About this RNA: Chemical mapping of a 207-nucleotide RNA with DMS and 2A3. 2A3 adducts were read by reverse transcription with SuperScript II with manganese. The reactions ran in a buffer of 150 mM KOAc, 10 mM MgCl2 and 150 mM bicine (pH 8.5), at 24 C. The 2A3 profile rests on 8,620 reads.
RNA sequence: GGGAACGACUCGAGUAGAGUCGAAAAUAUGGAUACUUCGGUAUCCAUAAAAAGCGUACUACUUGAGAGGUCGAACUACUCUGCAAUCCCAAAUAGGAUUGACAGAGCGACUACCCACCUCAAGUAUCGCAAAUACGACCGAAUUCGUUCGGUCGUACGUAUCGAGUGUAUUCGUACACUCGAUACGAAAAGAAACAACAACAACAAC
Reactivity to DMS in 0.01 (KOAc 150mM, MgCl2 10mM, bicine 150mM(pH8.5), 24C), signal-to-noise 3, nucleotides 027 to 156: u000a020u010g010g000a020u010a000c000u000u000c270g030g030u000a000u000c000c000a000u010a000a050a100a080a090g020c020g010u000a080c120u000a010c000u000u000g010a020g010a190g020g020u010c040g010a090a150c050u000a140c000u010c020u000g000c020a020a000u010c000c000c000a020a170a220u000a050g010g010a040u000u000g000a100c000a020g020a020g010c000g000a050c030u000a070c020c010c010a300c070c010u000c000a030a020g000u000a000u010c010g020c020a100a090a190u010a010c000g000a020c000c020g020a030a090u000u010c300g020u000u000c000g040g010u000c000g030u000a000
Reactivity to 2A3 in 0.01 (KOAc 150mM, MgCl2 10mM, bicine 150mM(pH8.5), 24C), signal-to-noise 6, nucleotides 027 to 156: u110a010u000g000g000a000u000a000c010u020u060c190g050g000u010a000u010c000c000a000u020a000a020a000a010a010g010c020g020u070a080c020u000a000c000u030u000g000a010g000a000g020g000u000c020g010a060a020c070u120a070c000u260c000u010g020c000a000a000u010c020c020c030a100a260a190u270a060g000g020a000u050u040g090a220c000a000g000a000g010c000g000a010c010u070a060c010c060c030a080c000c000u000c020a000a010g010u030a040u300c010g000c010a060a060a020u020a000c000g000a000c000c000g000a000a000u110u090c200g070u100u010c000g000g000u000c000g000u000a010